Chemical mapping of a 207-nucleotide RNA with 2A3. The 2A3 profile rests on 880 reads. The RNA was probed in 150 mM KOAc, 10 mM MgCl2 and 150 mM bicine (pH 8.5) at 24 C.
RNA sequence: GGGAACGACUCGAGUAGAGUCGAAAAUCGUAAGCUUCAAGCGCGUAGCAGUAGCUGCGUAGAACUCUCUCAUAGAGUCGCUUACCUCUGACCUGACUCCGUUAAGGACUCGGAGGUACCAACCCCAACGGAUGCCCUUAAUAGCUACCUCUGGUUGCCCUCUAUACGAGUUCGCUCGUAUAGAGGGAAAAGAAACAACAACAACAAC
Reactivity to 2A3 in 0.01 (KOAc 150mM, MgCl2 10mM, bicine 150mM(pH8.5), 24C), signal-to-noise 2, nucleotides 027 to 156: u130c020g020u070a140a000g000c040u120u080c160a130a140g030c030g080c120g230u280a070g000c030a070g020u120a020g000c010u000g000c000g000u030a040g090a090a020c000u000c000u020c000u000c040a110u110a280g010a010g010u000c000g000c030u010u070a040c000c010u000c010u030g030a010c000c000u010g020a080c020u010c090c060g040u050u120a080a040g000g000a030c080u030c050g000g040a000g000g000u020a050c030c030a000a050c010c010c010c020a040a000c020g020g010a100u070g000c010c010c000u050u100a060a020u080a200g040c040u050a040c010c020u090c090u100g080g000u030u090g050